Structure probing data (2A3) for a 177-nucleotide construct. Values are in units of 0.01, from 0 to 300, in steps of 10. The data come from the RNA Mapping Database (RMDB), library RFM100. 2A3 adducts were read by reverse transcription with SuperScript II with manganese.
RNA sequence: GGGAACGACUCGAGUAGAGUCGAAAAUGGUUUGAUUACUAGAUUCUAAUAUGACUAUGUAAUCCAUGCAGGAUGCUUAAAUUGAAUUUUGGUUAAACGGGAGUAUUAAAUUCAUUUUAAUAAACCUUUCUUGGUUUUACUUCGGUAAAACCAAGAAAAAAGAAACAACAACAACAAC
Reactivity to 2A3 in 0.01 (KOAc 150mM, MgCl2 10mM, bicine 150mM(pH8.5), 24C), signal-to-noise 1, nucleotides 027 to 126: u120g040g000u040u020u000g040a000u000u040a000c000u000a000g020a090u060u020c040u210a230a210u180a130u300g040a000c000u020a010u120g010u000a030a040u000c020c000a000u130g040c000a000g040g170a010u020g000c000u060u090a020a080a050u080u060g000a000a030u070u040u040u130g040g000u000u110a000a120a040c050g080g000g000a010g020u060a000u140u070a030a000a000u140u060c000a020u000u010u000u000a000a000u040a000a010a010c000c000u000